RNA sequence: GGGAACGACUCGAGUAGAGUCGAAAAGCCACUUACGGACACUCCGUCUGACGUACAGUCUCACUCGCAUGACUAGUCAAAGUCAUGACUGUGAGCGAGUACGACUGAUGGUCAGUUCGAGUGUGGAGCAGAGCAGACUAUUCGUAGUCUGCUCUGCAAAAGAAACAACAACAACAAC
Reactivity to DMS in 0.01 (KOAc 150mM, MgCl2 10mM, bicine 150mM(pH8.5), 24C), signal-to-noise 2, nucleotides 027 to 126: g000c010c000a080c080u010u000a190c090g060g000a040c010a250c140u000c000c050g000u020c000u010g000a090c000g000u010a010c020a150g010u000c000u000c030a020c000u000c120g000c000a050u000g020a020c000u010a110g020u020c210a090a060a120g010u000c050a010u000g000a070c050u000g000u010g010a030g020c020g010a140g020u000a010c030g000a060c020u000g010a040u000g000g000u000c080a100g020u000u000c130g010a070g000u010g040u000g000g000a130
Reactivity to 2A3 in 0.01 (KOAc 150mM, MgCl2 10mM, bicine 150mM(pH8.5), 24C), signal-to-noise 2, nucleotides 027 to 126: g010c010c010a040c020u050u050a070c030g050g020a010c000a000c030u020c010c030g020u000c010u010g010a010c010g020u060a010c000a040g050u040c010u000c010a000c000u050c020g000c020a030u060g030a030c010u050a030g150u110c030a140a130a020g090u040c020a050u050g050a080c000u010g000u010g040a010g040c000g010a020g010u000a000c010g020a020c000u000g020a020u090g010g010u020c050a020g000u010u010c000g000a010g030u010g000u020g030g030a030

Description
An RNA of 177 nucleotides, treated with DMS and 2A3 and read out base by base. It was measured as part of the RMDB library OK2TRN. The reactions ran in a buffer of 150 mM KOAc, 10 mM MgCl2 and 150 mM bicine (pH 8.5), at 24 C. For 2A3, 3,513 sequencing reads were counted. For DMS, 1,571 sequencing reads were counted. For DMS the reverse transcriptase was MarathonRT.